This 207-nucleotide RNA was probed chemically with 2A3. 2A3 adducts were read by reverse transcription with SuperScript II with manganese.
RNA sequence: GGGAACGACUCGAGUAGAGUCGAAAAAGUUGCUUAGGCAGAUUACGGCAGAUGAUUGAGCAGAAUGUUGGUGAGUCCGUAGUGGCCUGGUGGUUCUAGGAGGCCUGGCUUAGAGCCAGUCCAUCAAUACCUAUCACCUUGUGAGGGGGACGGGGAAGAGUCAGGAUUAUUUCGAUAAUCCUGACUCAAAAGAAACAACAACAACAAC
Reactivity to 2A3 in 0.01 (KOAc 150mM, MgCl2 10mM, bicine 150mM(pH8.5), 24C), signal-to-noise 1, nucleotides 027 to 156: a010g010u040u030g010c040u080u070a030g010g000c040a030g050a130u140u050a100c050g030g000c060a000g040a120u100g020a070u140u160g010a050g040c070a030g070a170a110u140g030u130u080g080g010u040g010a030g030u050c000c070g050u060a030g080u060g070g000c030c020u050g010g000u020g010g000u000u140c070u050a050g020g000a020g000g030c000c000u000g000g020c020u100u090a070g010a010g170c010c000a000g010u000c000c000a020u120c010a020a170u020a110c030c020u080a070u080c000a040c040c010u030u090g080u030g040a070g000g000g000g000g070a010c010g000g040g000g000a020a060